Chemical mapping of a 177-nucleotide RNA with 2A3.
RNA sequence: GGGAACGACUCGAGUAGAGUCGAAAAAAACCGAACUGAGCUCAGCUGAACUGAACUGAACUGAACUGAACUAUAGCGCAACCGAGAGCCGGCAUGAAUGAAUGGAUGAAUGAGCUCAGCCCGGCUCGUGACCGCCAGUAUUCGUACUGGCGGUCACAAAAGAAACAACAACAACAAC
Reactivity to 2A3 in 0.01 (KOAc 150mM, MgCl2 10mM, bicine 150mM(pH8.5), 24C), signal-to-noise 1, nucleotides 027 to 126: a000a030a010c000c000g000a040a000c000u000g000a040g000c000u000c000a000g130c040u070g070a080a000c000u030g010a060a010c000u110g060a110a120c070u030g030a050a000c000u090g070a040a090c000u070a020u070a210g010c030g000c120a000a070c190c130g140a040g050a000g030c000c110g020g000c180a180u000g100a270a000u020g110a080a000u090g000g180a020u070g070a160a130u080g000a060g000c040u000c050a000g010c000c000c000g000g000c000u000c000